The data come from the RNA Mapping Database (RMDB), library M2PK50. Chemical mapping of a 177-nucleotide RNA with 2A3 and DMS.

[RMDB]
RNA sequence: GGGAACGACUCGAGUAGAGUCGAAAAACUUUUUGAUUCGUCAAAAAGUAACUAGCGAGAAUGCGACUCGGUAUACGCAAAUAACCCUUGGAAACAAGGGAACAAACUAACGUUUCGACGUUAGUAAGAUUGCCCUAUCAUUCGUGAUAGGGCAAUCAAAAGAAACAACAACAACAAC
Reactivity to 2A3 in 0.01 (KOAc 150mM, MgCl2 10mM, bicine 150mM(pH8.5), 24C), signal-to-noise 2, nucleotides 027 to 126: a000c000u060u010u010u020u010g010a010u020u050c120g070u010c040a000a000a000a000a000g000u010a020a090c050u060a070g100c000g020a030g060a170a080u040g010c010g220a220c010u000c030g050g040u160a070u040a070c030g020c040a130a040a030u130a080a140c020c000c000u000u000g020g010a030a020a000c000a000a000g000g010g010a000a010c000a010a050a010c000u000a000a010c000g010u030u040u140c230g110a020c020g000u000u020a000g000u000a030a000
Reactivity to DMS in 0.01 (KOAc 150mM, MgCl2 10mM, bicine 150mM(pH8.5), 24C), signal-to-noise 2, nucleotides 027 to 126: a010c030u000u000u000u000u000g000a010u010u010c170g020u000c000a000a000a020a000a000g000u000a080a140c070u000a100g040c010g000a040g010a100a130u010g000c050g010a120c020u000c000g000g000u020a120u010a060c030g000c060a020a080a110u010a140a060c000c000c000u000u030g000g010a190a130a220c010a010a000g010g000g010a020a010c200a020a130a040c010u000a000a010c000g000u000u000u020c150g000a030c000g010u000u000a000g000u000a020a060